This 177-nucleotide RNA was probed chemically with 2A3 and DMS.
Conditions: 150 mM KOAc, 10 mM MgCl2 and 150 mM bicine (pH 8.5), 24 C.
2A3 adducts were read by reverse transcription with SuperScript II with manganese.
The DMS profile rests on 2,158 reads.

[RMDB]
RNA sequence: GGGAACGACUCGAGUAGAGUCGAAAAGAUAUGGACCGUGUGGCGAAUCGCAACAGCAACUUCGGAAACGAAGUUGACAUGCGAAACCACCGGUCCUAAGUCAAAGAGCCAGCUUCGGCUGGCUCAACAAUUUAUUCGACUUCGGUCGAAUAAAUUGAAAAGAAACAACAACAACAAC
Reactivity to 2A3 in 0.01 (KOAc 150mM, MgCl2 10mM, bicine 150mM(pH8.5), 24C), signal-to-noise 2, nucleotides 027 to 126: g020a030u090a030u130g000g000a000c000c010g160u130g000u010g300g060c090g180a140a110u030c000g000c040a040a160c010a260g070c000a010a010c020u000u000c000g030g030a140a050a080c010g000a000a000g010u000u030g070a040c000a010u090g010c030g000a060a030a010c000c000a000c000c000g000g000u010c000c000u000a000a010g000u000c000a030a080a130g000a000g000c020c020a000g000c010u100u150c300g170g000c000u000g020g020c010u000c020a000a000
Reactivity to DMS in 0.01 (KOAc 150mM, MgCl2 10mM, bicine 150mM(pH8.5), 24C), signal-to-noise 3, nucleotides 027 to 126: g020a050u000a300u030g000g020a000c010c000g020u030g020u010g010g000c040g010a220a100u000c000g010c000a030a080c300a230g000c000a030a000c000u000u010c000g000g000a120a150a280c000g000a010a000g000u000u000g000a020c140a140u000g010c010g000a020a130a040c000c000a000c000c010g020g000u000c000c000u010a010a050g010u010c020a090a150a200g000a020g030c000c020a010g010c000u010u040c240g020g000c000u000g030g030c000u000c010a010a080

Source: RMDB library TTRDES, as collected in RNAgym.